The record gives the reactivity of an RNA of 177 nucleotides to DMS and 2A3.
2A3 is a SHAPE reagent: it acylates the 2'-hydroxyl of flexible nucleotides of all four kinds.
The 2A3 profile rests on 4,880 reads.
The DMS profile rests on 2,402 reads.
2A3 adducts were read by reverse transcription with SuperScript II with manganese.

[RMDB]
RNA sequence: GGGAACGACUCGAGUAGAGUCGAAAAGAUAUGGAUUAAAUCCACUAUAGCAAUGAUGACGAUUCGGAAACGAAUCGUUUGAGCUACGUGGAGUUUAAUCCUAAGUCAAAAUCGUCCUUCGGGACGACGAUACAGCAGGGUUCGCCCUGCUGUAUCGAAAAGAAACAACAACAACAAC
Reactivity to DMS in 0.01 (KOAc 150mM, MgCl2 10mM, bicine 150mM(pH8.5), 24C), signal-to-noise 3, nucleotides 027 to 126: g030a040u000a300u010g000g000a010u000u000a000a010a050u000c000c000a010c010u010a290u000a020g000c010a240a180u010g020a140u000g000a010c010g000a020u000u020c010g000g000a090a090a150c000g000a000a000u000c000g030u010u000u000g000a080g020c000u000a050c300g010u000g010g000a030g020u000u000u000a030a010u010c000c000u000a050a090g000u000c050a100a110a100a160u000c000g000u000c010c000u000u010c220g010g010g000a010c000g010a010
Reactivity to 2A3 in 0.01 (KOAc 150mM, MgCl2 10mM, bicine 150mM(pH8.5), 24C), signal-to-noise 3, nucleotides 027 to 126: g030a020u060a040u130g000g000a010u030u000a000a040a000u030c100c020a010c050u300a300u130a300g000c020a120a300u120g030a050u090g010a040c010g010a010u010u010c000g020g000a080a080a020c010g000a000a010u000c000g000u000u010u020g010a000g000c030u020a050c240g010u000g010g050a050g100u040u020u000a000a000u000c000c000u010a110a000g020u040c070a030a020a020a300u050c000g000u000c010c000u020u080c290g080g020g000a010c000g000a010